[RMDB]
RNA sequence: GGGAACGACUCGAGUAGAGUCGAAAAGGUGGAGACACGCUGUACACCGGGAAUGCAUCGAACUCGCGUUUAAGCGGUCUGUAAGGCCGUCGGCGUCCUGGGGAAGGGUCACGGAAGUGACCCUUCUACUGAGUACACACUUCGGUGUGUACUCAGUAAAAGAAACAACAACAACAAC
Reactivity to DMS in 0.01 (KOAc 150mM, MgCl2 10mM, bicine 150mM(pH8.5), 24C), signal-to-noise 1, nucleotides 027 to 126: g020g070u000g040g010a210g000a160c040a010c020g000c100u000g000u010a120c140a140c040c060g000g000g000a110a030u010g030c070a190u010c050g010a050a040c080u020c180g000c220g010u010u000u000a050a130g020c030g000g000u020c020u000g000u010a060a030g010g000c000c000g060u000c030g010g000c010g010u000c000c010u000g010g000g000g010a050a020g000g010g010u000c040a000c010g000g050a060a170g020u000g010a010c000c010c000u000u000c000u000